[RMDB]
RNA sequence: GGGAACGACUCGAGUAGAGUCGAAAAGGCAAGAAUAGAAUUGCUCCUAUCGAGGGUGACACUUCAGGCCGUUUGCUAUAGUUGUUUGGUUUGUGGCCUGGUGGCGGAAACGGCGGUGUGUUAUGGCCAAUAUUAAUUAUUUCGAUAAUUAAUAUUGAAAAGAAACAACAACAACAAC
Reactivity to DMS in 0.01 (KOAc 150mM, MgCl2 10mM, bicine 150mM(pH8.5), 24C), signal-to-noise 9, nucleotides 027 to 126: g010g000c020a030a010g010a140a120u040a120g010a120a120u000u010g000c010u000c010c000u000a050u020c060g000a050g010g010g010u010g000a040c030a020c020u010u010c020a020g000g010c000c010g020u010u000u010g010c040u000a070u020a090g000u000u000g000u000u000u000g010g000u010u000u000g010u010g000g010c010c010u000g000g010u000g000g010c040g010g000a050a050a080c090g000g010c030g000g010u010g010u000g010u000u010a070u010g000g010c160
Reactivity to 2A3 in 0.01 (KOAc 150mM, MgCl2 10mM, bicine 150mM(pH8.5), 24C), signal-to-noise 3, nucleotides 027 to 126: g050g000c020a050a000g070a140a090u130a090g110a090a070u070u020g010c010u020c010c000u060a070u130c060g020a060g020g040g010u040g020a020c010a010c050u070u080c020a010g010g000c000c010g000u020u040u030g010c020u030a010u020a090g010u000u020g010u020u020u030g030g000u010u020u050g010u000g000g000c000c000u000g000g010u020g010g000c020g000g000a050a050a020c010g010g000c000g000g010u020g010u010g010u020u050a060u050g030g000c000

Conditions: 150 mM KOAc, 10 mM MgCl2 and 150 mM bicine (pH 8.5), 24 C.
An RNA of 177 nucleotides, treated with DMS and 2A3 and read out base by base.
The DMS profile rests on 49,467 reads.
For DMS the reverse transcriptase was MarathonRT.
Reactivities are given for positions 27 through 126.
For 2A3, 3,471 sequencing reads were counted.